[RMDB]
RNA sequence: GGGAACGACUCGAGUAGAGUCGAAAACGUACGUGGAGACACGUACGACGAGACUUCGGUCUCGAAUCGCGCGAACUGGUGCCGCGCGCGCGCGAGGCGUCGGUGGUCGGCGAGCCCACGGACGCAAAAACUCGCGCGUCGAUAAUGUGCAUUAGAAAUCGUAUAUCGGGUUCGCCCGAUAUACGAUAAAAGAAACAACAACAACAAC
Reactivity to 2A3 in 0.01 (KOAc 150mM, MgCl2 10mM, bicine 150mM(pH8.5), 24C), signal-to-noise 1, nucleotides 027 to 156: c000g000u010a000c000g000u000g000g030a070g000a040c000a000c000g020u010a000c000g000a010c000g000a000g000a000c010u080u180c300g070g010u000c000u000c000g030a030a040u060c000g000c000g000c000g020a120a200c040u000g000g030u000g020c010c000g000c000g000c000g050c000g040c000g000c010g000a000g050g010c000g000u000c070g160g000u010g000g010u030c040g040g170c190g030a040g030c000c070c000a010c020g070g000a000c000g000c000a080a140a060a000a000c020u020c000g000c000g000c000g000u030c040g020a020u110a140a100u220g060u050g080c010a000u000u040a010g010a050a150